[RMDB]
RNA sequence: GGGAACGACUCGAGUAGAGUCGAAAAGGAAUAAAAGCAGUGAAACAAGAAUCGAACUAGCUCUCGAUUUGGAAGUUAGCAACCUAAUCUUGAGCGAAAUUACUUGUUAACUAUGAGCGUAGAUAUUUAUGUGAUUGGAUAAUUUGGACAUGGGUUCGUGGCAAUGGAUGUUCGCAUCCAUUGCCACAAAAGAAACAACAACAACAAC
Reactivity to 2A3 in 0.01 (KOAc 150mM, MgCl2 10mM, bicine 150mM(pH8.5), 24C), signal-to-noise 1, nucleotides 027 to 156: g040g020a070a050u110a040a120a010a020g130c030a000g000u020g040a060a050a000c030a020a000g060a000a060u070c120g040a110a050c050u050a050g000c000u010c000u020c070g000a010u030u030u100g050g000a020a030g090u180u080a030g150c000a040a050c000c000u010a000a000u010c000u020u020g000a000g000c000g010a020a060a060u050u030a030c010u000u000g000u030u000a010a020c000u010a090u130g000a030g040c000g020u050a000g010a010u040a090u070u130u100a140u130g090u090g060a150u010u060g060g000a020u030a060a110u080u000u040g010g000a000c030a100u010g010g110g000u010u050c010
Structure probing data (2A3) for a 207-nucleotide construct.
Reactivities are rounded to 0.1 and cut off at 0 and 3.